This 207-nucleotide RNA was probed chemically with 2A3 and DMS. 2A3 adducts were read by reverse transcription with SuperScript II with manganese.
RNA sequence: GGGAACGACUCGAGUAGAGUCGAAAAACCUUUGUGCUAAGACAUGCUCGAAGCCACCUUGGAUUUACGCUACCCAUUGGGUAGCGUUGUCAGGUGGCGUAAGAGCAACAGCUUAGCACUCUGGUAAAACACAUAGCAUCUUCGGAUGCUAUGUGAAGAGAAACCUUCUGUUCGCAGAAGGUUUCUCAAAAGAAACAACAACAACAAC
Reactivity to 2A3 in 0.01 (KOAc 150mM, MgCl2 10mM, bicine 150mM(pH8.5), 24C), signal-to-noise 3, nucleotides 027 to 156: a000c000c010u000u000u020g010u000g000c000u000a000a000g000a080c030a170u070g000c000u010c020g050a090a010g000c010c000a000c000c020u110u190g230g030a090u200u220u230a010c000g000c000u010a010c000c020c130a300u130u300g000g000g000u000a000g000c010g000u000u010g000u000c010a020g020g000u010g000g000c000g000u000a000a010g000a010g050c000a000a000c000a000g010c000u010u000a000g000c010a000c000u000c010u010g020g000u020a070a070a030a020c000a000c000a000u020a010g010c010a000u000c000u040u020c280g080g010a000u020g000c000u000a010u010g000u000g000a000a010
Reactivity to DMS in 0.01 (KOAc 150mM, MgCl2 10mM, bicine 150mM(pH8.5), 24C), signal-to-noise 2, nucleotides 027 to 156: a030c010c020u000u000u010g000u000g010c000u010a000a000g000a040c100a300u000g010c010u010c000g000a250a300g010c020c010a010c000c000u010u000g030g030a040u000u010u000a000c020g030c000u000a000c000c010c010a300u000u020g020g030g010u020a060g010c000g020u010u000g010u000c000a040g010g040u000g000g000c000g000u000a000a300g020a030g010c000a000a040c080a150g020c040u000u000a010g000c010a020c010u000c020u000g010g010u000a060a070a100a220c000a010c010a000u000a000g030c000a020u000c000u000u000c300g020g010a020u010g010c000u020a000u000g020u000g000a050a100